The record gives the reactivity of an RNA of 207 nucleotides to 2A3.
2A3 adducts were read by reverse transcription with SuperScript II with manganese.
The reactions ran in a buffer of 150 mM KOAc, 10 mM MgCl2 and 150 mM bicine (pH 8.5), at 24 C.
It was measured as part of the RMDB library OK3TST.
Values cover nucleotides 27 to 156.
[RMDB]
RNA sequence: GGGAACGACUCGAGUAGAGUCGAAAAGUCGCCAUGCAUUGAUUGCCACUUGGUAAUAUAAAUGACACAACAGAAGCGACCUCACGAAGACACACACACAGUACGUACAAAGUGAUGUACUUUUCCUUUGUUCACUGAACCCAAGUAAUACAAUUGAAAAUUAAUGCGACUUCGGUCGCAUUAAUUUAAAAGAAACAACAACAACAAC
Reactivity to 2A3 in 0.01 (KOAc 150mM, MgCl2 10mM, bicine 150mM(pH8.5), 24C), signal-to-noise 2, nucleotides 027 to 156: g010u010c000g010c040c000a060u050g000c000a010u020u010g000a000u000u000g040c040c000a140c090u110u240g000g000u060a120a000u090a020u050a050a070a020u050g040a030c000a010c010a270a000c020a060g070a090a020g000c000g000a050c030c000u050c000a040c040g040a100a000g060a030c010a000c020a000c000a000c000a000c030a100g100u130a040c100g050u030a000c060a080a060a070g100u120g140a030u040g090u160a100c000u070u060u050u010c010c000u000u040u060g020u030u070c010a000c020u010g090a110a070c040c000c000a020a020g080u080a080a130u110a160c020a060a060u130u100g170a110